[RMDB]
RNA sequence: GGGAACGACUCGAGUAGAGUCGAAAAGAUAUGGAAUUAGUAAGACAGGACCCGAGGUCGUGUCGGAAACGACAUCAACUCGCCAAUGACGCUAAUUCCUAAGUCAAAAGCGAUCUUCGGAUCGCAACCUAUGCUUAAACUUCGGUUUAAGCAUAGGAAAAGAAACAACAACAACAAC
Reactivity to DMS in 0.01 (KOAc 150mM, MgCl2 10mM, bicine 150mM(pH8.5), 24C), signal-to-noise 6, nucleotides 027 to 126: g010a030u000a300u010g010g000a020a010u000u000a000g010u000a240a140g030a160c050a000g010g000a190c140c170c010g030a000g000g010u000c300g000u000g000u000c010g010g000a050a080a210c010g000a010c000a010u000c090a160a230c010u000c000g000c020c010a080a140u000g000a130c090g000c010u010a000a030u000u000c000c000u000a040a090g000u000c040a060a110a070a080g000c000g000a010u000c010u000u000c180g000g010a020u000c010g010c000a020a030
Reactivity to 2A3 in 0.01 (KOAc 150mM, MgCl2 10mM, bicine 150mM(pH8.5), 24C), signal-to-noise 3, nucleotides 027 to 126: g020a010u080a030u160g000g000a000a010u010u010a000g020u040a220a120g100a210c020a020g030g010a020c020c040c030g000a010g000g020u100c020g000u000g000u010c010g000g030a060a070a030c010g010a000c000a000u020c030a040a030c000u010c000g000c020c010a050a090u040g000a010c040g000c020u000a000a000u000u010c000c000u010a130a030g060u040c040a040a030a110a060g010c000g010a000u000c010u060u130c290g130g000a000u000c000g000c000a000a000